Chemical mapping of a 177-nucleotide RNA with DMS and 2A3. The reactions ran in a buffer of 150 mM KOAc, 10 mM MgCl2 and 150 mM bicine (pH 8.5), at 24 C. Source: RMDB library OK1LIB, as collected in RNAgym. For DMS the reverse transcriptase was MarathonRT.
RNA sequence: GGGAACGACUCGAGUAGAGUCGAAAAUCUAUAGUACCUUUAUUCGCCUUACCGCACGCGAUCGCGUACAUCUGGCGAAUAUCAUGCGCAAAAUCCGCGUGAUGCCAGACGUCAUUAAAGUCACCCGCCGUAAAUUAGUAUUCGUACUAAUUUACGGAAAAGAAACAACAACAACAAC
Reactivity to DMS in 0.01 (KOAc 150mM, MgCl2 10mM, bicine 150mM(pH8.5), 24C), signal-to-noise 6, nucleotides 027 to 126: u020c080u000a080u030a090g020u010a050c070c040u010u010u010a060u030u010c050g000c020c010u000u030a080c070c050g010c020a030c030g020c070g000a080u030c100g000c080g040u020a030c050a130u000c010u000g000g000c000g000a070a070u030a050u000c010a000u010g010c010g020c300a060a060a080a120u050c280c010g020c010g030u000g000a010u000g020c020c000a010g000a050c060g010u000c070a060u020u010a050a070a060g000u000c030a070c020c020c000g010
Reactivity to 2A3 in 0.01 (KOAc 150mM, MgCl2 10mM, bicine 150mM(pH8.5), 24C), signal-to-noise 9, nucleotides 027 to 126: u050c040u030a130u060a160g070u110a110c010c020u100u130u060a120u070u090c030g020c010c010u040u090a060c030c030g030c040a020c020g050c030g120a160u120c100g010c020g050u050a020c010a050u010c010u010g000g000c020g010a010a010u050a010u030c000a010u040g010c030g030c080a090a110a080a210u100c060c010g000c000g010u010g010a020u050g010c000c000a010g010a030c010g040u020c010a040u040u180a120a060a020g030u030c010a030c030c010c010g010